[RMDB]
RNA sequence: GGGAACGACUCGAGUAGAGUCGAAAAAUGGAGCAGGGCCGUGGCGGAAGAAGAGGACGAGGAGGUCGUCGAAAUUUCGCUCUUUCCUAAUUGACCUUCUUGCGUUUGCGACGCUGUUUCGGCUGAGCGAUCAAAUAGGAUUCGUCCUAUUUGAUCGAAAAGAAACAACAACAACAAC
Reactivity to DMS in 0.01 (KOAc 150mM, MgCl2 10mM, bicine 150mM(pH8.5), 24C), signal-to-noise 6, nucleotides 027 to 126: a120u010g000g000a030g020c010a060g000g000g030c010c020g060u000g000g000c010g010g000a050a030g010a040a040g000a110g000g010a110c190g000a030g000g010a040g000g010u000c050g000u020c090g010a030a210a160u000u010u000c050g010c110u000c030u000u000u010c000c010u010a060a120u010u000g010a130c050c010u000u000c010u000u000g000c030g010u000u000u020g030c030g010a060c030g000c010u000g010u010u000u000c010g020g010c120u010g000a120g010
Reactivity to 2A3 in 0.01 (KOAc 150mM, MgCl2 10mM, bicine 150mM(pH8.5), 24C), signal-to-noise 5, nucleotides 027 to 126: a000u130g010g000a000g000c020a030g020g090g000c020c020g010u030g020g000c030g040g060a020a010g020a020a000g030a090g060g030a030c020g020a020g020g000a010g000g030u040c050g020u020c020g040a040a090a110u210u230u040c030g020c010u020c000u070u140u040c020c000u050a100a130u070u130g040a050c000c000u030u010c010u030u040g110c020g030u100u250u210g010c000g010a010c010g010c150u010g010u020u020u020c040g020g000c060u080g040a040g080
Chemical mapping of a 177-nucleotide RNA with DMS and 2A3.
The DMS profile rests on 11,133 reads.
Source: RMDB library OK2TST, as collected in RNAgym.